[RMDB]
RNA sequence: GGGAACGACUCGAGUAGAGUCGAAAACGUGCCUUCAUGCUACGGGUUUGAUAUCUGCUAAAACCCGGUGCAUUCAUCAAUGCAGGUUAAGCCAAAGGGAUGUCCCGACCGGAGGCCGACAAUCCAGAUAGCUCAAGAAUGUUCGCAUUCUUGAGAAGUAUUUAUAAGGUUUCGACCUUAUAAAUACAAAAGAAACAACAACAACAAC
Reactivity to DMS in 0.01 (KOAc 150mM, MgCl2 10mM, bicine 150mM(pH8.5), 24C), signal-to-noise 6, nucleotides 027 to 156: c050g010u000g000c020c020u000u000c050a090u000g010c020u010a160c000g010g010g010u000u010u000g010a190u000a070u000c070u000g000c080u010a150a030a020a030c000c010c010g000g060u010g020c020a070u000u000c090a040u010c110a100a130u000g020c010a050g030g020u000u000a090a090g020c010c040a060a300a240g010g020g010a080u000g010u000c010c010c010g010a220c030c030g000g000a300g020g020c010c010g000a080c080a070a110u000c030c030a190g000a170u000a120g010c000u000c000a020a020g010a030a010u000g020u000u010c300g040c020a020u000u000c000u000u010g010a010g010a020a110
Reactivity to 2A3 in 0.01 (KOAc 150mM, MgCl2 10mM, bicine 150mM(pH8.5), 24C), signal-to-noise 7, nucleotides 027 to 156: c050g090u110g040c010c020u130u140c090a060u080g000c010u040a040c000g000g000g000u020u000u000g030a030u030a040u080c020u020g010c030u040a020a010a010a030c000c000c000g010g000u000g000c010a090u080u240c030a050u070c070a140a180u150g000c010a000g050g000u020u070a040a010g010c000c010a020a010a010g030g010g010a040u060g050u050c000c010c010g010a010c010c000g010g000a000g000g000c000c000g000a010c020a110a050u050c080c020a030g050a190u130a080g050c000u000c000a000a000g000a000a000u020g020u060u080c160g010c100a000u000u000c000u000u000g000a000g000a000a000